[RMDB]
RNA sequence: GGGAACGACUCGAGUAGAGUCGAAAAAUGCAGAAAGAUCAUGGAAGACAUCAAUUUUUCGUCGCUGGCUCCGCGGCACGGCUCGCGGCCGUUCAUGGGCACCUGGAACGACAUCGGCACCAGCCAGCUCAACGGGGGCGCUUUCAGUUGGAGCAGCCAGUAUGCAAUCAUUCGUGAUUGCAUACUGAAAAGAAACAACAACAACAAC
Reactivity to 2A3 in 0.01 (KOAc 150mM, MgCl2 10mM, bicine 150mM(pH8.5), 24C), signal-to-noise 4, nucleotides 027 to 156: a000u050g000c010a000g050a030a030a000g050a070u160c040a040u090g030g030a020a010g040a090c040a120u080c060a090a140u040u070u070u090u100c070g020u040c030g020c020u030g110g040c010u000c030c000g010c020g050g000c080a040c160g070g010c050u030c060g060c040g050g040c010c010g050u070u110c080a160u120g000g010g020c020a020c000c040u040g010g040a110a050c040g150a030c060a120u210c110g020g000c060a030c030c000a010g050c020c010a040g020c010u020c020a010a040c030g010g020g020g050g020c070g020c040u030u140u130c070a050g020u140u160g070g000a010g000c000a000g000c000
Reactivity to DMS in 0.01 (KOAc 150mM, MgCl2 10mM, bicine 150mM(pH8.5), 24C), signal-to-noise 1, nucleotides 027 to 156: a050u000g000c030a050g020a130a030a070g020a050u000c050a160u000g000g000a050a070g000a100c080a050u000c070a080a060u000u000u000u000u000c050g040u000c050g040c050u020g020g030c010u000c010c090g010c020g010g050c060a110c070g030g000c040u010c050g010c070g010g020c010c010g010u000u000c070a100u010g010g030g010c060a100c050c010u000g000g000a090a090c060g000a060c070a040u010c060g050g010c010a140c020c020a210g040c060c040a090g000c040u010c040a060a050c040g020g000g010g040g050c050g040c010u000u020u000c040a150g020u000u000g050g000a070g010c000a090g020c060

About this RNA:
The record gives the reactivity of an RNA of 207 nucleotides to 2A3 and DMS. The reactions ran in a buffer of 150 mM KOAc, 10 mM MgCl2 and 150 mM bicine (pH 8.5), at 24 C. Reactivities are given for positions 27 through 156.